[RMDB]
RNA sequence: GGGAACGACUCGAGUAGAGUCGAAAACAUUGGCAUUUCGAUGCCAAUGGGUCUGCGUCGCGCGGCCGCCGAGUCGUUCCCGCGGCCGCGUGACGGAGUUUGGGCAGCUCGAGUUCGCUCGAGCUAACUGUAAUGCAACAUUCGUGUUGCAUUACAGAAAAGAAACAACAACAACAAC
Reactivity to 2A3 in 0.01 (KOAc 150mM, MgCl2 10mM, bicine 150mM(pH8.5), 24C), signal-to-noise 1, nucleotides 027 to 126: c000a010u000u010g000g020c000a000u070u050u150c290g140a020u030g010c020c000a000a000u010g000g000g030u030c020u030g080c010g000u010c020g000c000g000c000g020g030c010c060g040c140c190g110a080g040u010c000g000u020u000c010c000c000g010c000g000g000c110c000g000c000g000u000g000a000c020g000g010a000g020u060u200u110g050g000g030c060a010g000c010u010c020g000a010g010u060u150c250g000c060u000c000g000a000g000c010u000a010a030
Reactivity to DMS in 0.01 (KOAc 150mM, MgCl2 10mM, bicine 150mM(pH8.5), 24C), signal-to-noise 1, nucleotides 027 to 126: c020a000u000u000g000g000c000a010u000u000u020c180g010a010u000g010c000c000a000a010u000g010g010g010u000c010u000g010c000g010u000c000g010c020g020c030g000g020c010c010g030c050c130g010a090g020u000c010g000u010u000c000c000c000g120c000g000g000c000c000g030c000g000u000g000a010c010g000g000a030g010u000u000u010g020g020g000c160a050g000c010u000c000g010a030g010u000u010c160g020c000u000c000g000a010g010c020u000a010a060

Structure probing data (2A3 and DMS) for a 177-nucleotide construct. For DMS, 3,996 sequencing reads were counted. The 2A3 profile rests on 2,708 reads. 2A3 adducts were read by reverse transcription with SuperScript II with manganese.